About this RNA: This 177-nucleotide RNA was probed chemically with 2A3 and DMS.
[RMDB]
RNA sequence: GGGAACGACUCGAGUAGAGUCGAAAAAUUGCCAAGUUUGGUCUGGUCGUUCGAGGGACAGGCCCAGACGACCGCGUGGUCGCCAACUAUGUACGAAGCGAGCUCCGACAACGCGGCCUGCAGGACGACAUCUCUCACCGUUCGCGGUGAGAGAUGUAAAAGAAACAACAACAACAAC
Reactivity to 2A3 in 0.01 (KOAc 150mM, MgCl2 10mM, bicine 150mM(pH8.5), 24C), signal-to-noise 3, nucleotides 027 to 126: a000u140u150g090c030c030a060a090g120u060u140u110g010g000u020c040u040g000g000u000c030g020u070u270c140g090a170g050g060g060a080c070a090g060g020c030c000c010a020g000a020c020g030a050c010c000g020c030g040u080g050g000u010c020g010c050c070a120a050c050u130a090u300g080u140a110c150g100a080a020g060c000g050a030g060c040u040c020c000g040a050c020a040a000c030g020c020g040g050c000c000u000g040c040a090g060g120a040c090g000
Reactivity to DMS in 0.01 (KOAc 150mM, MgCl2 10mM, bicine 150mM(pH8.5), 24C), signal-to-noise 2, nucleotides 027 to 126: a050u040u010g060c040c010a070a110g000u020u020u030g010g020u000c090u000g000g000u000c000g010u000u010c010g060a160g020g000g020a150c100a060g000g010c060c040c040a100g000a070c060g000a060c010c000g040c140g000u000g000g020u000c020g040c100c070a070a120c090u000a040u060g020u000a100c170g020a170a130g000c050g000a090g000c020u010c160c070g000a040c100a050a020c120g000c110g000g040c000c010u000g000c020a040g000g000a020c050g010
The DMS profile rests on 2,360 reads.